Structure probing data (DMS) for a 177-nucleotide construct. Reactivities are given for positions 27 through 126. For DMS the reverse transcriptase was MarathonRT. The data come from the RNA Mapping Database (RMDB), library TTRDES. The reactions ran in a buffer of 150 mM KOAc, 10 mM MgCl2 and 150 mM bicine (pH 8.5), at 24 C.
[RMDB]
RNA sequence: GGGAACGACUCGAGUAGAGUCGAAAAAAAGAUAUGGAGUGAACUACACAAGGUGGUGCGUUUGACGUACAAUCGGAAACGAUUGUACCGAGCACCACAGCAGCAGCUGUGCACUCCUAAGUCAAAACAAUAGAAUUCGCUUCGGCGAAUUCUAUUGAAAAGAAACAACAACAACAAC
Reactivity to DMS in 0.01 (KOAc 150mM, MgCl2 10mM, bicine 150mM(pH8.5), 24C), signal-to-noise 1, nucleotides 027 to 126: a090a070a110g030a000u020a100u020g020g000a070g020u020g000a120a220c080u020a040c070a140c260a140a140g020g010u000g000g000u010g020c000g010u000u020u010g010a230c300g000u000a000c000a000a000u020c000g020g000a060a010a010c020g000a000u000u000g000u000a020c000c010g010a050g040c000a000c010c000a010c000a000g020c190a120g040c300a070g000c100u020g000u000g020c030a020c000u000c000c020u010a020a080g010u000c000a100a090a060a120